[RMDB]
RNA sequence: GGGAACGACUCGAGUAGAGUCGAAAAAGUUAUAUCACAUGAUGAUUUAUGAUGAAUUGAUUCCGGAAGAUCACUAUCGUAUUUUGUGGUUCCACAAUUCAUUUCCAUACAUGUUAUUGUCACACUAAUAUUAUGAUGAACUUUAUCUAGCCGCUGAGUACUGUCCACGUUUCGACGUGGACAGUACAAAAGAAACAACAACAACAAC
Reactivity to 2A3 in 0.01 (KOAc 150mM, MgCl2 10mM, bicine 150mM(pH8.5), 24C), signal-to-noise 2, nucleotides 027 to 156: a000g110u160u020a190u010a000u070c010a010c010a000u000g010a000u000g000a050u010u000u300a140u230g030a000u030g000a010a000u010u000g130a080u300u110c160c070g040g000a040a060g050a080u050c000a000c010u050a070u220c200g130u180a240u130u160u120u080g030u010g000g060u070u030c000c000a010c000a000a000u000u000c000a000u030u040u000c130c000a000u010a220c020a030u010g040u080u050a030u070u140g110u000c060a080c010a050c110u090a050a240u090a110u270u130a040u120g040a020u010g050a070a030c020u080u120u100a060u120c120u010a030g080c010c000g070c090u010g010a000
The record gives the reactivity of an RNA of 207 nucleotides to 2A3. Reactivities are rounded to 0.1 and cut off at 0 and 3. The reactions ran in a buffer of 150 mM KOAc, 10 mM MgCl2 and 150 mM bicine (pH 8.5), at 24 C. It was measured as part of the RMDB library OK3TST.